[RMDB]
RNA sequence: GGGAACGACUCGAGUAGAGUCGAAAAAUAAACGCAGAAGAUAAUUUUGCAUUAGCAGCUUAAUUUAGCGCUGCUCAUCCUUCCUCAAUUGCCCACGGUUGAGAGUAAGGGUGUCAUUUAAAAGUGGGGAACCGAGCCUAGCAAAGCUUUGAGCUAGCUAGAUACCGCAGUUCGCUGCGGUAUCUAGAAAAGAAACAACAACAACAAC
Reactivity to 2A3 in 0.01 (KOAc 150mM, MgCl2 10mM, bicine 150mM(pH8.5), 24C), signal-to-noise 1, nucleotides 027 to 156: a010u080a010a010a020c050g000c040a010g050a060a010g060a090u130a300a220u180u100u060u030g000c010a010u000u210a000g000c010a000g000c000u070u090a120a080u300u290u290a180g060c020g010c060u000g000c000u000c000a000u010c000c000u030u000c000c000u010c000a000a020u000u000g000c000c010c000a000c000g000g030u040u010g000a000g020a010g000u160a000a010g000g060g040u020g020u020c030a050u010u200u170a090a080a020a000g000u020g000g030g010g000a030a010c040c060g020a020g050c000c040u000a000g000c000a070a250a000g090c040u170u140u240g050a020g030c000u020a000g000